Chemical mapping of a 177-nucleotide RNA with 2A3 and DMS. It was measured as part of the RMDB library OK2TRN. The DMS profile rests on 2,545 reads. The 2A3 profile rests on 1,640 reads. DMS adducts were read by reverse transcription with MarathonRT.

RNA sequence: GGGAACGACUCGAGUAGAGUCGAAAAAGGAAAGAGUGGGGAUCCUAAGGUUACUACAGGGGGCUCAGUGUCAUCCACAACUUCCUAUAUUAGGGAUAAAACAUAUAGGUGCACAAGAGCUGGGGUACAUCUUGCUUGUAUUCGUACAAGCAAGAUGAAAAGAAACAACAACAACAAC
Reactivity to 2A3 in 0.01 (KOAc 150mM, MgCl2 10mM, bicine 150mM(pH8.5), 24C), signal-to-noise 2, nucleotides 027 to 126: a000g080g010a110a040a010g100a030g070u110g000g010g000g020a010u050c010c010u080a070a060g100g050u140u120a060c070u030a040c130a120g000g030g000g000g010c010u030c020a010g000u000g040u080c030a040u050c000c020a050c000a040a040c060u050u000c000c010u040a050u020a060u280u180a040g000g000g000a040u140a090a100a020a010c030a010u150a010u050a120g050g020u020g010c010a010c010a110a050g000a010g000c010u040g000g000g000g000u000a020
Reactivity to DMS in 0.01 (KOAc 150mM, MgCl2 10mM, bicine 150mM(pH8.5), 24C), signal-to-noise 3, nucleotides 027 to 126: a060g000g010a050a080a070g000a100g010u000g010g010g000g000a090u000c050c080u000a100a090g020g020u000u010a080c130u010a130c170a090g000g000g000g010g040c010u000c030a110g030u000g000u000c080a050u000c020c070a080c120a100a110c180u000u000c000c000u000a110u040a090u040u010a080g000g000g000a050u010a060a050a090a100c130a070u010a070u000a070g020g030u000g000c020a040c060a070a120g000a040g020c030u000g010g000g000g000u000a110